[RMDB]
RNA sequence: GGGAACGACUCGAGUAGAGUCGAAAAUGAUGCUUUGUCCGAUUACUAACCACGGAUACUUACCUAAUGAGGAUCUCUUAACCAGAGGACAUUCAAUUCCAACGAUCGGUUAGGGCAGUUCAUCGUGAGUUAUUAGACCUUUCGAGGUCUAAUAACUAAAAGAAACAACAACAACAAC
Reactivity to DMS in 0.01 (KOAc 150mM, MgCl2 10mM, bicine 150mM(pH8.5), 24C), signal-to-noise 8, nucleotides 027 to 126: u000g010a030u000g010c070u000u000u000g020u000c010c020g010a170u010u010a140c150u000a060a070c080c040a140c170g010g010a050u010a060c120u000u000a130c090c080u010a070a120u010g000a080g010g000a110u020c010u000c040u000u000a090a110c270c210a070g000a100g010g000a060c150a060u000u000c120a060a130u000u000c040c020a100a220c180g000a030u000c090g000g010u000u000a080g000g000g010c050a010g000u000u000c030a040u000c030g000u000g010
Reactivity to 2A3 in 0.01 (KOAc 150mM, MgCl2 10mM, bicine 150mM(pH8.5), 24C), signal-to-noise 7, nucleotides 027 to 126: u070g020a010u020g010c020u050u040u030g010u000c000c020g100a120u140u090a100c080u050a050a060c030c020a050c060g010g030a040u040a130c040u070u110a090c020c030u110a150a100u160g040a050g070g020a090u040c030u000c000u070u080a070a050c030c000a020g020a010g020g020a010c020a050u100u090c030a050a090u110u020c030c020a070a040c070g060a090u120c050g010g000u020u030a050g010g020g000c010a030g010u050u030c000a020u030c040g040u040g130